This 177-nucleotide RNA was probed chemically with DMS and 2A3.
Values cover nucleotides 27 to 126.

[RMDB]
RNA sequence: GGGAACGACUCGAGUAGAGUCGAAAAUGUCCAGGCAGGUAGAUGACGACCAUCAGGGACAGCUUCAACGGCUCUUACCAGCCUAACUUCGAUCACUGGACCGCUGAUCGUCACGGCGAUUUAUGCCAAAUGCGAUCAAUUUCGAUUGAUCGCAUUUAAAAGAAACAACAACAACAAC
Reactivity to DMS in 0.01 (KOAc 150mM, MgCl2 10mM, bicine 150mM(pH8.5), 24C), signal-to-noise 6, nucleotides 027 to 126: u010g000u010c010c040a130g000g030c060a040g000g010u000a080g010a170u000g010a030c030g000a030c030c010a050u010c080a170g030g000g010a070c040a030g010c180u000u000c060a090a150c290g010g000c010u010c030u010u030a120c240c190a060g010c000c010u000a100a080c210u010u010c130g000a020u000c170a100c010u000g000g010a100c010c020g020c200u000g000a030u000c010g000u000c030a020c110g000g000c050g010a100u010u010u000a080u020g010c020c020
Reactivity to 2A3 in 0.01 (KOAc 150mM, MgCl2 10mM, bicine 150mM(pH8.5), 24C), signal-to-noise 3, nucleotides 027 to 126: u120g000u000c000c000a020g040g000c020a000g090g000u130a010g020a300u050g020a040c030g010a040c060c000a030u040c060a050g010g000g030a000c000a010g010c000u040u050c050a060a050c120g010g000c000u000c000u060u100a040c010c010a010g000c020c020u020a070a060c040u150u130c060g060a080u040c030a020c040u030g040g010a090c010c010g020c060u010g000a040u010c000g000u030c030a000c050g050g030c020g030a010u090u100u160a100u170g010c000c000
Notes
Conditions: 150 mM KOAc, 10 mM MgCl2 and 150 mM bicine (pH 8.5), 24 C. DMS adducts were read by reverse transcription with MarathonRT. The DMS profile rests on 5,865 reads.